[RMDB]
RNA sequence: GGGAACGACUCGAGUAGAGUCGAAAACGUCCCCGUCGUACAGAAUGGUAACAUAUCCCUCCAAAUAUCUGAGCUUGGGUAUACGGGGAAACCCAACCCCUUGGGAAGAUUGGGUAUAUGGCUAAAUUACAUCGAUUGUACUUCGGUACAAUCGAAACGGUACAGUGAAGUUCGCUUCACUGUACCGAAAAGAAACAACAACAACAAC
Reactivity to DMS in 0.01 (KOAc 150mM, MgCl2 10mM, bicine 150mM(pH8.5), 24C), signal-to-noise 1, nucleotides 027 to 156: c030g000u000c000c000c000c000g000u000c140g030u000a140c080a140g010a170a160u000g020g030u000a100a020c040a050u000a140u000c000c010c000u030c070c040a080a280a080u030a150u000c030u000g000a300g050c040u010u000g030g000g010u000a270u000a120c140g020g000g030g010a220a080a140c000c000c000a050a110c080c000c000c050u000u000g000g030g000a280a190g000a090u000u000g050g000g030u010a030u000a090u000g000g020c090u000a080a140a080u000u000a090c070a230u000c020g000a000u010u010g040u000a000c000u000u030c240g090g000u000a000c000a000a000u000c000g000a000a020a060
Reactivity to 2A3 in 0.01 (KOAc 150mM, MgCl2 10mM, bicine 150mM(pH8.5), 24C), signal-to-noise 2, nucleotides 027 to 156: c040g130u050c010c000c000c030g210u160c040g020u090a080c070a120g180a150a120u130g150g030u080a150a030c030a020u030a030u000c020c000c000u070c130c050a120a100a030u240a030u040c020u000g030a020g060c000u010u000g000g040g000u010a040u030a030c000g000g010g010g000a050a020a000c000c000c000a000a020c020c000c000c000u000u000g020g000g000a010a030g000a010u030u040g010g000g030u070a000u000a000u040g010g010c020u070a060a160a120u160u150a060c050a090u030c010g000a000u000u000g000u000a000c000u020u070c140g050g000u000a000c010a010a000u000c000g000a000a010a000
Description: Source: RMDB library M2RFPK, as collected in RNAgym. The record gives the reactivity of an RNA of 207 nucleotides to DMS and 2A3. The DMS profile rests on 1,276 reads. DMS adducts were read by reverse transcription with MarathonRT.